[RMDB]
Chemical mapping of a 207-nucleotide RNA with DMS and 2A3. It was measured as part of the RMDB library VIROID.

RNA sequence: GGGAACGACUCGAGUAGAGUCGAAAAGUGAUCCAGGUACCGCCGUAGAAACUGGAUUACGACGUCUACCCGGGAUUCAAACCCGGUCCCCUCCAGAAGUGAUUCUGGAUGAAAGAGUCUGCGCUAAGCGCACUGAUGAGUCUCUGAAAUGAGACGACUUGUAUUAUACGUUCGCGUAUAAUACAAGAAAAGAAACAACAACAACAAC
Reactivity to DMS in 0.01 (KOAc 150mM, MgCl2 10mM, bicine 150mM(pH8.5), 24C), signal-to-noise 2, nucleotides 027 to 156: g030u000g000a090u000c010c010a070g010g070u010a070c040c020g060c110c280g000u000a120g000a130a130a210c030u000g000g000a090u000u010a090c030g000a060c050g010u000c020u000a030c020c000c070g060g020g010a210u000u010c130a090a100a280c080c040c000g030g010u000c010c000c010c040u000c010c010a040g010a050a040g020u010g010a300u000u000c010u010g040g000a060u000g000a070a080a150g010a140g000u000c030u000g020c000g050c010u000a120a100g060c070g020c000a070c030u010g020a150u000g000a150g030u000c010u030c020u000g000a120a120a200u000g000a010g020a130c000g020a200
Reactivity to 2A3 in 0.01 (KOAc 150mM, MgCl2 10mM, bicine 150mM(pH8.5), 24C), signal-to-noise 3, nucleotides 027 to 156: g030u030g000a000u000c000c000a000g060g030u100a130c070c090g200c070c070g110u160a070g140a100a250a020c000u000g000g000a000u000u020a000c010g000a000c030g170u040c020u010a020c000c000c000g000g020g010a100u300u260c110a100a170a170c010c000c000g000g030u030c000c010c000c000u000c000c000a020g000a010a010g040u080g070a100u000u010c000u000g010g010a020u110g000a010a010a000g060a020g010u010c070u110g000c000g020c080u160a190a100g040c020g000c010a010c090u120g070a140u120g040a070g030u000c000u000c010u030g020a060a080a070u170g000a000g010a000c000g010a020